RNA sequence: GGGAACGACUCGAGUAGAGUCGAAAAGAUAUGGACACGAACAAGCUAGAACGAUGAAAUCGGAAACGAUGGAGUUCUAGAACUACUUGGGAGUGUCCUAAGUCAAAGCCUCGGUUCGCCGAGGCAACUUUUAUAAUUGGUUCGCCAAUUAUAAAAGAAAAGAAACAACAACAACAAC
Reactivity to 2A3 in 0.01 (KOAc 150mM, MgCl2 10mM, bicine 150mM(pH8.5), 24C), signal-to-noise 3, nucleotides 027 to 126: g010a000u050a040u160g000g000a000c000a000c020g020a060a020c000a000a020g000c000u000a000g010a010a010c010g300a300u080g040a040a040a010u010c010g000g040a090a020a030c020g000a010u020g000g020a030g000u000u030c000u000a000g000a010a020c050u200a010c000u010u000g010g010g010a030g000u000g000u000c000c000u000a020a000g010u010c030a040a090a050g000c010c000u010c000g010g060u060u080c300g010c060c000g010a000g000g000c000a010a000
Reactivity to DMS in 0.01 (KOAc 150mM, MgCl2 10mM, bicine 150mM(pH8.5), 24C), signal-to-noise 6, nucleotides 027 to 126: g010a040u000a300u000g000g000a000c010a000c010g020a300a280c010a010a010g000c000u000a000g000a020a010c000g010a100u000g010a070a080a010u000c000g000g000a090a060a140c020g010a010u000g010g000a060g010u000u000c010u000a000g000a030a030c080u020a290c010u000u000g000g000g010a300g010u000g000u000c000c000u000a020a080g000u000c040a080a100a150g000c010c000u000c010g000g010u000u010c230g030c000c000g010a000g010g010c000a000a000
Chemical mapping of a 177-nucleotide RNA with 2A3 and DMS. For 2A3, 9,358 sequencing reads were counted. For DMS the reverse transcriptase was MarathonRT.